An RNA of 207 nucleotides, treated with 2A3 and DMS and read out base by base.
[RMDB]
RNA sequence: GGGAACGACUCGAGUAGAGUCGAAAACCAGCUUGCCUGUGUCCUAGGGAAUUGGAAGGUCAUCCUUCACAGGAUCGUGUGGAAGUCCUGCUCGGGGCGGAAGCAUUUAAACCAUUCGAGCUAGUCAAAAACCGGCUGAUCUUCGGAUCAGCCGGAACCUAUCUUGUUUGUUCGCAAACAAGAUAGGAAAAGAAACAACAACAACAAC
Reactivity to 2A3 in 0.01 (KOAc 150mM, MgCl2 10mM, bicine 150mM(pH8.5), 24C), signal-to-noise 3, nucleotides 027 to 156: c000c000a010g020c050u050u130g030c000c000u040g020u020g020u080c010c050u050a080g050g010g030a090a170u190u090g050g030a100a030g060g010u120c070a080u100c020c020u080u100c030a020c020a030g020g020a040u070c100g010u010g010u020g050g020a030a000g010u010c010c020u060g060c110u130c170g010g000g020g000c010g000g010a010a010g010c000a000u080u120u100a050a060a040c040c020a050u080u130c040g010a000g020c020u060a010g140u190c090a020a030a010a080a180c000c000g000g000c000u000g000a000u010c000u020u080c240g060g000a000u000c000a000g000c000c000g000g000a000a000
Reactivity to DMS in 0.01 (KOAc 150mM, MgCl2 10mM, bicine 150mM(pH8.5), 24C), signal-to-noise 1, nucleotides 027 to 156: c010c010a090g000c030u000u000g010c000c000u010g010u010g030u010c020c030u000a110g040g000g010a100a120u000u010g030g020a080a060g010g020u000c040a110u000c010c020u000u010c110a150c130a140g020g010a070u010c100g000u020g030u040g000g010a290a210g000u000c010c020u010g000c120u000c120g030g020g020g020c020g010g020a240a190g020c070a090u010u000u010a080a090a170c020c030a190u000u000c010g010a160g020c030u000a070g000u050c070a050a090a050a080a140c000c000g050g010c000u000g020a020u000c010u000u010c300g070g010a020u000c010a030g000c000c000g000g000a000a000
For 2A3 the reverse transcriptase was SuperScript II with manganese. Source: RMDB library M2RFPK, as collected in RNAgym. For 2A3, 2,984 sequencing reads were counted. The reactions ran in a buffer of 150 mM KOAc, 10 mM MgCl2 and 150 mM bicine (pH 8.5), at 24 C.